[RMDB]
RNA sequence: GGGAACGACUCGAGUAGAGUCGAAAAAUCAAUGCAGUCGCAUUGGCUCUUAAGGAUUCUAUCAAGAACAUCAGUCUUGGAAGAUUGGCUGGAUUAUGUCUUAUUGUGGAGUUGAGGGAAGGUAUACGAAAGAUCAAAACUUCGGUUUUGAUCUUUCAAAAGAAACAACAACAACAAC
Reactivity to 2A3 in 0.01 (KOAc 150mM, MgCl2 10mM, bicine 150mM(pH8.5), 24C), signal-to-noise 2, nucleotides 027 to 126: a000u050c010a010a030u000g000c010a060g300u300c170g030c040a010u020u010g030g020c000u040c010u170u130a110a050g060g010a120u160u000c000u030a100u070c040a040a020g040a120a050c030a090u120c020a030g050u000c010u080u190g050g040a050a060g020a120u010u100g040g000c000u030g050g000a090u090u090a060u210g050u030c030u070u160a130u070u180g030u050g000g050a070g000u080u050g010a040g060g010g000a060a060g000g050u080a100u030a120c140
Reactivity to DMS in 0.01 (KOAc 150mM, MgCl2 10mM, bicine 150mM(pH8.5), 24C), signal-to-noise 5, nucleotides 027 to 126: a070u000c020a030a000u000g010c010a250g010u010c200g010c010a000u000u010g000g020c080u000c040u010u000a080a090g000g010a100u000u000c030u000a060u010c100a040a030g010a060a070c080a070u010c100a060g010u000c020u000u000g020g010a080a070g010a100u000u010g010g010c040u000g010g000a070u010u000a060u000g010u000c030u000u000a110u010u000g020u000g010g000a060g010u010u000g010a100g000g000g000a050a030g000g010u010a060u000a080c200